[RMDB]
RNA sequence: GGGAACGACUCGAGUAGAGUCGAAAAGAGUGGAACUCAUGGAGUUGAAACGAUAAAUUCAUCAAAAGGCAGUUUGCCAGUUGGUGAGGAUCAACGAAAUUUGUCGAGUUCUGUGUAGCCUCCAUUGAGGCGCGGAUAAUUUCGAUUAUCCGCGCCUAAAAGAAACAACAACAACAAC
Reactivity to DMS in 0.01 (KOAc 150mM, MgCl2 10mM, bicine 150mM(pH8.5), 24C), signal-to-noise 2, nucleotides 027 to 126: g020a080g000u000g030g000a090a060c000u000c000a040u010g030g000a300g000u000u000g000a040a120a170c150g000a150u060a040a050a110u050u000c020a040u000c020a000a000a040a050g000g050c000a170g010u040u070u020g040c010c000a030g020u000u000g000g020u000g000a060g040g000a120u010c010a020a010c080g010a230a050a050u010u040u010g050u020c170g000a160g020u000u000c000u000g020u030g000u010a160g010c000c000u000c010c050a210u020u090g000
Reactivity to 2A3 in 0.01 (KOAc 150mM, MgCl2 10mM, bicine 150mM(pH8.5), 24C), signal-to-noise 2, nucleotides 027 to 126: g160a000g070u100g010g010a030a020c010u020c020a060u110g000g030a000g000u020u030g040a100a120a040c000g020a000u120a060a100a070u040u000c000a030u000c000a000a020a030a100g020g000c000a070g090u150u240u150g050c050c010a000g120u000u030g010g000u010g010a020g050g000a060u030c030a010a030c040g060a010a030a110u080u080u190g080u110c080g000a000g040u010u000c000u000g020u030g000u020a020g010c020c000u060c050c000a050u000u110g080
Source: RMDB library OK1LIB, as collected in RNAgym. Chemical mapping of a 177-nucleotide RNA with DMS and 2A3. For DMS, 1,968 sequencing reads were counted. The reactions ran in a buffer of 150 mM KOAc, 10 mM MgCl2 and 150 mM bicine (pH 8.5), at 24 C.